[RMDB]
Structure probing data (2A3) for a 207-nucleotide construct. Values are in units of 0.01, from 0 to 300, in steps of 10. The reactions ran in a buffer of 150 mM KOAc, 10 mM MgCl2 and 150 mM bicine (pH 8.5), at 24 C. It was measured as part of the RMDB library M2RFPK. 2A3 adducts were read by reverse transcription with SuperScript II with manganese. As a SHAPE reagent, 2A3 marks flexible, mostly unpaired nucleotides at the ribose 2'-OH.

RNA sequence: GGGAACGACUCGAGUAGAGUCGAAAAAGCGCUGGUACGAUACGUCGUACCAGUGCAGUCGUUGGGAUGGAACGCAAUUAAAUACAUGUGUGACGUGUAUUUGCGAACGACGUAAUUAUUUUUCAAAAUCACGCUAUCGUGUUCGCACGAUAGCGAACUGGUUAUUUCACUUCGGUGAAAUAACCAGAAAAGAAACAACAACAACAAC
Reactivity to 2A3 in 0.01 (KOAc 150mM, MgCl2 10mM, bicine 150mM(pH8.5), 24C), signal-to-noise 2, nucleotides 027 to 156: a010g000c000g000c000u000g000g010u020a000c000g010a020u010a050c160g020u010c000g000u020a040c000c000a000g000u000g000c000a000g030u010c010g000u000u040g150g010g040a110u080g070g070a180a060c020g020c000a000a030u170u120a140a040a000u010a000c010a000u020g060u040g100u160g240a040c050g010u000g000u010a050u020u020u060g020c010g050a020a020c000g020a000c040g020u020a120a030u150u110a090u100u120u060u100u030c110a040a010a060a110u160c020a120c100g020c000u000a000u000c020g000u000g020u060u040c150g050c120a000c000g020a000u010a000g000c000g000a000a010